Chemical mapping of a 170-nucleotide RNA with DMS and 2A3. 2A3 adducts were read by reverse transcription with SuperScript II with manganese. The RNA was probed in 150 mM KOAc, 10 mM MgCl2 and 150 mM bicine (pH 8.5) at 24 C. The DMS profile rests on 17,973 reads.

RNA sequence: GGGAACGACUCGAGUAGAGUCGAAAAGUUCAACAGUGGGGUUAUGUAGGCAAUCUUGCUACUAAUCACGAUCGUUAUUGCUCUGUCCAUCAAGGAGCUCAUGUGGCUUCUAAUGAUGCAAUAAUGAAAAUCGGACAGUUCGCUGUCCGAAAAAGAAACAACAACAACAAC
Reactivity to DMS in 0.01 (KOAc 150mM, MgCl2 10mM, bicine 150mM(pH8.5), 24C), signal-to-noise 4, nucleotides 027 to 129: g020u030u010c040a030a060c130a100g020u060g030g020g020g010u010u040a030u010g000u000a020g030g090c030a020a040u000c180u080u030g000c050u050a070c060u000a080a030u000c030a090c140g000a090u060c020g030u000u000a050u000u000g020c010u040c080u030g040u000c070c070a060u020c060a140a070g010g000a000g020c030u020c070a090u090g020u000g010g000c020u010u000c010u010a120a090u050g030a080u010g030c000a000a000u000a000a000u000g000a040a020a080a100
Reactivity to 2A3 in 0.01 (KOAc 150mM, MgCl2 10mM, bicine 150mM(pH8.5), 24C), signal-to-noise 6, nucleotides 027 to 129: g020u040u030c040a030a040c000a050g050u050g040g040g000g000u030u040a120u210g020u000a050g150g000c020a050a070u060c130u080u130g020c010u030a040c020u020a050a040u080c030a010c070g040a070u040c000g010u000u000a010u000u000g000c000u000c050u140g100u060c070c010a030u060c040a030a020g000g000a010g000c000u010c010a150u300g160u260g010g000c000u010u010c010u000a090a060u100g000a020u090g020c000a000a010u020a010a000u020g050a030a000a000a070

Source: RMDB library 15KLIB, as collected in RNAgym.